[RMDB]
RNA sequence: GGGAACGACUCGAGUAGAGUCGAAAAUGUCACACAGUAGCGAGGGAUGCAAUUAAUUGCAUCUACACCAAGCUCAAGGCUUGGAUUUCGACUAGUGUCGAGUCGUUCCCACUCGCUACGCGCACAAGUUGUAAUACGAAUUCGUUCGUAUUACAACAAAAGAAACAACAACAACAAC
Reactivity to DMS in 0.01 (KOAc 150mM, MgCl2 10mM, bicine 150mM(pH8.5), 24C), signal-to-noise 8, nucleotides 027 to 126: u010g020u010c150a130c200a130c140a190g020u000a010g000c010g020a020g000g010g000a000u000g000c010a010a040u000u010a100a100u010u000g000c000a000u000c000u000a070c110a170c010c000a010a010g010c000u000c200a130a090g000g000c000u000u000g000g000a300u000u000u000c000g000a010c000u000a040g010u010g010u000c000g000a000g010u000c000g000u000u000c000c000c000a000c010u010c010g000c010u000a000c020g020c190g020c170a090c150a080a090
Reactivity to 2A3 in 0.01 (KOAc 150mM, MgCl2 10mM, bicine 150mM(pH8.5), 24C), signal-to-noise 2, nucleotides 027 to 126: u080g020u040c020a050c010a000c020a160g000u010a010g000c000g010a000g000g050g010a000u010g000c010a010a020u140u240a170a200u160u010g000c000a000u000c010u000a010c040a020c000c000a000a010g010c000u070c150a100a100g180g010c010u000u000g010g020a080u020u020u010c010g000a000c010u030a020g180u030g080u300c000g000a000g000u000c010g000u000u000c000c000c000a000c000u000c010g010c000u020a010c020g020c010g040c050a030c000a120a050